[RMDB]
RNA sequence: GGGAACGACUCGAGUAGAGUCGAAAACGACGCCCGGCCGGCGAAUCGUGAAGCGGCACGUAAUGAAAGACCGCGCCUAUACCUUCGCUCGUCAGACGCGCCAGCACCUCCUCCCGAUCGGCGCUGGGGAGACCAAUAGAUUCGUCUAUUGGUCUCCAAAAGAAACAACAACAACAAC
Reactivity to 2A3 in 0.01 (KOAc 150mM, MgCl2 10mM, bicine 150mM(pH8.5), 24C), signal-to-noise 2, nucleotides 027 to 126: c010g130a040c020g020c000c030c000g000g100c010c030g050g000c020g050a050a080u110c030g030u020g030a100a010g060c040g050g040c060a020c100g070u120a090a160u270g120a230a080a030g080a060c000c010g000c030g070c040c000u120a120u090a120c000c000u040u020c010g000c020u020c000g060u040c030a000g020a080c020g000c020g040c070c000a020g030c010a040c010c010u060c000c040u030c000c010c000g030a040u060c020g010g030c020g000c060u010g020g050
Reactivity to DMS in 0.01 (KOAc 150mM, MgCl2 10mM, bicine 150mM(pH8.5), 24C), signal-to-noise 2, nucleotides 027 to 126: c040g020a140c080g010c040c010c040g010g010c030c070g010g010c020g000a070a070u000c120g010u000g000a080a150g000c050g000g000c000a030c050g010u020a080a170u000g010a070a110a090g000a120c090c020g010c040g000c030c000u000a120u010a100c090c050u000u000c030g010c030u000c200g000u000c050a110g000a060c100g020c060g020c010c010a020g010c010a100c010c010u000c040c070u010c000c020c010g000a080u000c120g000g000c050g020c010u010g000g030

Record summary:
The data come from the RNA Mapping Database (RMDB), library OK2TST. The record gives the reactivity of an RNA of 177 nucleotides to 2A3 and DMS. 2A3 adducts were read by reverse transcription with SuperScript II with manganese.